[RMDB]
RNA sequence: GGGAACGACUCGAGUAGAGUCGAAAAACGGCGGCAAGGAGCUCUGGUUCUACAAAGCUGCAAGGGAACUGUCGGAGCGCAACUGGCGAGGCAUCCCGCCUGGCCCACUAGAAUCACUGAAAGGCACAACGACUCAUAUAUUCGUAUAUGAGUCGUUAAAAGAAACAACAACAACAAC
Reactivity to DMS in 0.01 (KOAc 150mM, MgCl2 10mM, bicine 150mM(pH8.5), 24C), signal-to-noise 7, nucleotides 027 to 126: a100c110g010g010c050g010g010c090a100a090g010g010a130g010c020u000c040u010g010g010u000u000c040u000a080c090a070a090a120g010c030u000g020c120a070a120g010g010g010a050a050c060u000g020u010c060g010g020a080g030c050g010c090a070a090c130u010g000g000c030g010a070g000g010c060a080u000c040c020c020g010c070c030u010g000g000c010c010c070a090c140u000a070g000a080a040u000c070a050c090u000g000a050a060a070g010g010c080a090c180
Reactivity to 2A3 in 0.01 (KOAc 150mM, MgCl2 10mM, bicine 150mM(pH8.5), 24C), signal-to-noise 4, nucleotides 027 to 126: a000c030g040g010c020g000g010c030a040a040g080g000a030g050c010u000c040u100g050g020u050u010c010u070a130c050a080a120a020g050c030u060g050c060a050a080g040g000g000a030a040c030u030g070u070c050g050g030a060g040c060g000c050a040a080c070u050g030g010c010g020a030g000g020c010a060u060c000c010c000g000c010c010u010g050g000c000c020c000a020c010u030a030g040a080a040u090c020a050c120u070g060a110a070a040g080g000c080a020c020